[RMDB]
RNA sequence: GGGAACGACUCGAGUAGAGUCGAAAAAUAAGCUGUUGAUAUGCUAGUUCAAAAAGCAAUUCAAACUGCUAUGUGACCUAGAAAAACACCAUCUUGACUCAUCUAAAGGUGGAAUGGCCAUUAAGCUGCUAUUCCCACCAGAAAUGGAAUUAUAAGCCGUAUACGAUAGAUUCGUCUAUCGUAUACGAAAAGAAACAACAACAACAAC
Reactivity to DMS in 0.01 (KOAc 150mM, MgCl2 10mM, bicine 150mM(pH8.5), 24C), signal-to-noise 4, nucleotides 027 to 156: a090u010a080a090g030c010u000g030u000u000g020a160u000a080u000g030c010u000a100g020u000u000c060a030a070a090a190a060g010c040a050a140u000u000c140a120a090a110c090u000g030c020u000a130u000g030u000g000a030c030c010u000a120g000a050a050a070a090a070c100a080c030c000a040u000c020u000u010g010a090c040u010c210a110u010c020u000a060a050a060g010g020u000g000g020a070a050u010g010g010c000c010a180u000u000a070a100g030c070u000g020c050u000a170u000u000c020c020c010a090c060c020a090g010a070a070a080u000g010g010a070a080u000u000a120u000a070a100g030c080
Reactivity to 2A3 in 0.01 (KOAc 150mM, MgCl2 10mM, bicine 150mM(pH8.5), 24C), signal-to-noise 9, nucleotides 027 to 156: a000u090a020a020g000c020u010g010u060u020g050a050u070a050u170g020c010u010a030g090u110u210c120a070a070a040a020a010g020c020a020a020u070u060c030a060a090a120c030u040g010c010u020a060u110g110u070g030a040c010c010u040a060g100a070a110a020a010a010c040a030c020c000a030u030c030u040u090g080a100c040u030c130a110u050c110u190a120a050a030g000g020u020g010g010a030a030u030g020g000c010c010a020u080u070a110a040g050c100u060g000c000u060a040u020u010c000c000c010a010c000c000a000g020a020a070a010u040g010g050a020a030u220u130a110u120a190a010g060c010